Structure probing data (2A3 and DMS) for a 177-nucleotide construct. The data come from the RNA Mapping Database (RMDB), library OK2TRN. DMS adducts were read by reverse transcription with MarathonRT. For 2A3 the reverse transcriptase was SuperScript II with manganese.

RNA sequence: GGGAACGACUCGAGUAGAGUCGAAAAUCAAAGUUACAUAGUGGAUUAACAGGCCUCCCCCUCUGGAAGGCAUUUGUUACCUGAUUUACAAUCUAGAGGAAGCUAAUCCUGCAUAGCGGCCAAGCUGGUAUACUGAUUUUUUCGAAAAUCAGUAUACAAAAGAAACAACAACAACAAC
Reactivity to 2A3 in 0.01 (KOAc 150mM, MgCl2 10mM, bicine 150mM(pH8.5), 24C), signal-to-noise 5, nucleotides 027 to 126: u080c030a050a050a040g070u110u120a050c030a050u150a100g090u080g090g030a100u100u070a080a040c050a070g050g070c010c010u010c030c020c000c000c010u040c010u030g000g020a020a000g010g010c030a020u120u080u080g030u010u020a020c000c000u010g030a050u040u070u120a090c060a070a110u020c010u050a030g010a010g090g010a020a010g000c000u030a070a020u030c010c000u010g020c020a040u040a050g020c020g020g000c020c000a010a020g020c030u060g040
Reactivity to DMS in 0.01 (KOAc 150mM, MgCl2 10mM, bicine 150mM(pH8.5), 24C), signal-to-noise 9, nucleotides 027 to 126: u000c060a070a100a150g010u000u000a080c110a100u000a090g010u000g010g010a090u000u000a030a050c040a080g010g000c020c030u000c030c020c030c120c090u000c070u000g000g020a030a030g000g010c030a040u000u010u010g010u000u000a060c050c040u000g000a080u000u000u010a080c160a100a150u000c030u010a050g000a040g000g010a130a090g010c050u000a050a080u000c020c020u000g020c080a080u010a050g010c040g010g020c040c060a050a100g000c090u010g010